[RMDB]
Chemical mapping of a 207-nucleotide RNA with 2A3 and DMS.
For DMS, 1,873 sequencing reads were counted.
DMS adducts were read by reverse transcription with MarathonRT.
The RNA was probed in 150 mM KOAc, 10 mM MgCl2 and 150 mM bicine (pH 8.5) at 24 C.
The data come from the RNA Mapping Database (RMDB), library M2RFPK.
For 2A3 the reverse transcriptase was SuperScript II with manganese.
Reactivities are rounded to 0.1 and cut off at 0 and 3.

RNA sequence: GGGAACGACUCGAGUAGAGUCGAAAAAGACGUGUACGCACGUCACACCGUGGCGGCGUUGUAAAACAAACAUUAAGCCGCCAGCGUCCCGGAACAAGGCAUUUUCCGAUUCUCCGGGGGUUGCAAAAAAACUGAACUUGGUUCGCCAAGUUCAGAACUUUCUAAAUCUCUUCGGAGAUUUAGAAAGAAAAGAAACAACAACAACAAC
Reactivity to 2A3 in 0.01 (KOAc 150mM, MgCl2 10mM, bicine 150mM(pH8.5), 24C), signal-to-noise 2, nucleotides 027 to 156: a000g010a000c020g000u000g000u030a020c290g010c130a000c010g000u000c000a010c010a000c030c010g070u020g000g000c020g000g020c070g010u030u030g060u100a110a200a110a080c070a040a160a000c020a060u130u140a120a010g000c000c000g020c000c000a000g000c010g020u030c000c010c000g000g010a050a030c060a090a040g070g000c100a060u050u020u170u110c020c020g030a080u130u050c020u000c040c000g000g000g000g020g030u170u090g000c040a120a050a000a010a010a000a070c000u010g010a000a000c000u010u010g010g000u060u050c050g010c060c000a000a000g010u000u010c000a000g000a010a000
Reactivity to DMS in 0.01 (KOAc 150mM, MgCl2 10mM, bicine 150mM(pH8.5), 24C), signal-to-noise 1, nucleotides 027 to 156: a050g010a000c010g020u000g020u000a190c190g020c020a020c030g000u010c000a080c010a080c100c030g060u000g040g050c000g000g060c030g020u000u020g010u000a070a060a130a220c130a180a110a130c060a120u010u020a060a110g000c000c000g060c010c000a010g010c040g000u010c000c000c000g030g030a020a120c130a110a100g040g000c080a140u030u030u000u000c020c010g010a230u000u020c080u000c000c000g040g040g060g000g030u030u000g020c010a000a000a070a090a130a230a100c000u010g000a010a030c000u010u000g000g020u010u020c300g030c030c000a020a000g000u000u020c000a030g000a040a060